RNA sequence: GGGAACGACUCGAGUAGAGUCGAAAAGAUAUGGAAUAGGUUAUCCGAUAAGCGUACUGUCGGAAACGACAGACGCUUUUGACGGAUUUCCUAUUCCUAAGUCAAAACAAUCAGGUUCGCCUGAUUGCAUCAUGUGAGUCUUCGGACUCACAUGAUGAAAAGAAACAACAACAACAAC
Reactivity to 2A3 in 0.01 (KOAc 150mM, MgCl2 10mM, bicine 150mM(pH8.5), 24C), signal-to-noise 2, nucleotides 027 to 126: g000a000u050a010u090g000g020a010a000u010a020g020g020u000u040a000u030c030c150g100a100u140a240a000g010c020g000u080a300c220u000g030u020c000g030g000a040a030a010c000g000a000c010a010g020a000c010g010c040u000u000u020u000g050a020c060g000g010a010u000u010u000c000c000u000a000u010u000c000c000u000a010a000g000u000c050a000a100a110a190c010a000a020u020c020a000g000g100u060u100c270g180c060c010u000g000a000u000u010g030
Reactivity to DMS in 0.01 (KOAc 150mM, MgCl2 10mM, bicine 150mM(pH8.5), 24C), signal-to-noise 3, nucleotides 027 to 126: g010a010u000a300u000g000g000a020a000u000a020g020g020u000u000a010u000c010c010g000a200u000a010a020g010c000g010u000a130c000u000g020u030c010g020g000a050a040a100c000g010a010c000a010g020a030c010g000c010u000u010u000u010g010a170c180g000g000a010u000u000u000c010c000u000a020u000u000c000c000u010a010a060g010u000c060a120a070a120a300c010a010a000u000c000a010g000g010u010u000c300g040c010c000u000g010a010u000u000g020

An RNA of 177 nucleotides, treated with 2A3 and DMS and read out base by base. 2A3 adducts were read by reverse transcription with SuperScript II with manganese. The DMS profile rests on 3,007 reads. The reactions ran in a buffer of 150 mM KOAc, 10 mM MgCl2 and 150 mM bicine (pH 8.5), at 24 C. Source: RMDB library TTRDES, as collected in RNAgym.